Chemical mapping of a 177-nucleotide RNA with 2A3 and DMS. DMS adducts were read by reverse transcription with MarathonRT. 2A3 adducts were read by reverse transcription with SuperScript II with manganese. For DMS, 742 sequencing reads were counted. The 2A3 profile rests on 1,516 reads. Reactivities are given for positions 27 through 126.

RNA sequence: GGGAACGACUCGAGUAGAGUCGAAAAGAUAUGGACCAAUGGGCGCUUUGAUCUUAUAGAAAUUCGGAAACGAACACUAUAAGGGAGCGUAGUUGGUCCUAAGUCAAAAGUAGAGUUCGCUCUACAACAUAGUGUUGCGGUUCGCCGCAACACUAUGAAAAGAAACAACAACAACAAC
Reactivity to 2A3 in 0.01 (KOAc 150mM, MgCl2 10mM, bicine 150mM(pH8.5), 24C), signal-to-noise 2, nucleotides 027 to 126: g000a000u010a000u040g000g000a030c020c040a010a000u200g080g300g000c010g010c010u300u200u030g010a010u030c000u000u000a000u000a040g110a190a300a300u300u060c000g000g070a010a000a030c020g000a060a030c130a010c130u010a020u010a000a000g040g010g000a000g000c010g020u020a010g010u000u000g000g020u000c000c000u010a000a000g030u000c000a020a080a080a060g000u010a000g010a020g030u120u140c250g000c080u040c000u000a010c000a030a000
Reactivity to DMS in 0.01 (KOAc 150mM, MgCl2 10mM, bicine 150mM(pH8.5), 24C), signal-to-noise 1, nucleotides 027 to 126: g000a010u000a110u000g010g000a050c000c000a030a010u010g010g030g010c030g040c020u000u000u000g010a000u000c000u000u000a000u020a000g000a160a200a300u000u000c000g030g010a050a020a060c000g000a060a170c250a150c010u000a010u000a000a030g000g000g020a000g000c000g030u000a210g000u000u000g000g010u000c000c000u000a000a030g000u000c000a060a070a110a240g000u000a000g010a040g000u000u010c280g050c000u000c010u000a010c010a140a210